RNA sequence: GGGAACGACUCGAGUAGAGUCGAAAAGCAGUAUCUCGUUAGGCGAGGCUCCUAUACAAACACAGGUUGCUGAUCUGACGACGUCGAGAGACGCCCAAGAUUAGGACAGGAUAUAUCGAAGCAAGGUGAACCUGUCCAGGGUUCGCCCUGGACAGAAGCUUAGGAAGUAGUUCGCUACUUCCUAAGCAAAAGAAACAACAACAACAAC
Reactivity to 2A3 in 0.01 (KOAc 150mM, MgCl2 10mM, bicine 150mM(pH8.5), 24C), signal-to-noise 5, nucleotides 027 to 156: g050c040a020g030u140a120u060c040u010c020g030u060u180a080g070g100c030g030a040g020g010c040u030c020c020u170a130u060a160c140a040a130a020c090a010c030a090g080g030u120u100g100c000u020g030a060u000c010u050g010a020c010g010a010c020g020u030c010g010a010g000a010g000a120c000g010c010c010c000a010a010g020a040u040u070a010g030g030a010c020a050g070g020a010u050a020u030a040u220c100g070a060a010g040c050a030a030g080g020u070g040a050a040c010c000u000g000u000c000c000a010g020g000g020u030u070c170g100c020c000c000u000g010g000a000c000a000g000a020a000
Reactivity to DMS in 0.01 (KOAc 150mM, MgCl2 10mM, bicine 150mM(pH8.5), 24C), signal-to-noise 2, nucleotides 027 to 156: g010c040a080g000u030a090u000c020u010c000g030u010u010a100g010g010c060g000a130g030g010c020u000c020c000u010a080u010a150c090a110a060a150c080a090c070a080g020g030u000u000g010c020u000g010a040u000c010u010g010a180c020g100a010c010g010u000c000g010a300g010a300g000a020c020g010c000c030c060a250a060g010a040u000u010a090g010g000a100c020a090g020g000a170u000a100u010a100u000c040g010a040a090g000c030a040a060g020g030u000g010a050a110c070c000u000g020u000c020c030a080g010g000g010u000u000c260g020c000c000c000u000g000g000a040c020a010g040a020a070